[RMDB]
Background:
The record gives the reactivity of an RNA of 177 nucleotides to 2A3 and DMS.

RNA sequence: GGGAACGACUCGAGUAGAGUCGAAAAGAAAAUCCCAAGCAUAGCAUAGCAUAGCAUAGCAUAGCAUAGCAUAGCAUAGCAUAGCAUAGGAUAGCAUAGCAUAGCAUAGCAUAGCAUACAAAAAAAAAUGUUACGUCGAAUUCGUUCGACGUAACAUAAAAGAAACAACAACAACAAC
Reactivity to 2A3 in 0.01 (KOAc 150mM, MgCl2 10mM, bicine 150mM(pH8.5), 24C), signal-to-noise 1, nucleotides 027 to 126: g020a010a070a000a050u000c000c000c000a020a000g010c020a050u120a010g000c000a040u080a040g000c020a080u120a010g040c010a020u060a010g000c000a040u040a040g000c000a020u030a000g040c010a010u060a000g030c030a020u030a040g040c020a040u100a030g020c010a020u020a070g000g170a030u050a020g020c080a040u030a000g030c020a040u040a050g000c060a020u030a000g000c010a090u010a020g020c030a070u200a110c230a020a080a010a000a010a000a010a020
Reactivity to DMS in 0.01 (KOAc 150mM, MgCl2 10mM, bicine 150mM(pH8.5), 24C), signal-to-noise 1, nucleotides 027 to 126: g000a050a090a130a100u000c000c000c010a080a060g060c100a080u000a050g020c010a040u000a080g030c070a050u020a050g020c070a040u020a100g000c130a020u000a050g000c050a010u000a070g000c040a060u020a070g000c050a010u010a030g010c050a050u000a060g030c030a010u000a040g000g030a020u010a040g040c010a050u010a030g000c050a110u000a120g000c060a070u000a000g010c040a030u000a110g050c070a080u010a030c050a000a000a000a000a000a050a070a140
Background: It was measured as part of the RMDB library M2PK90. The 2A3 profile rests on 1,147 reads.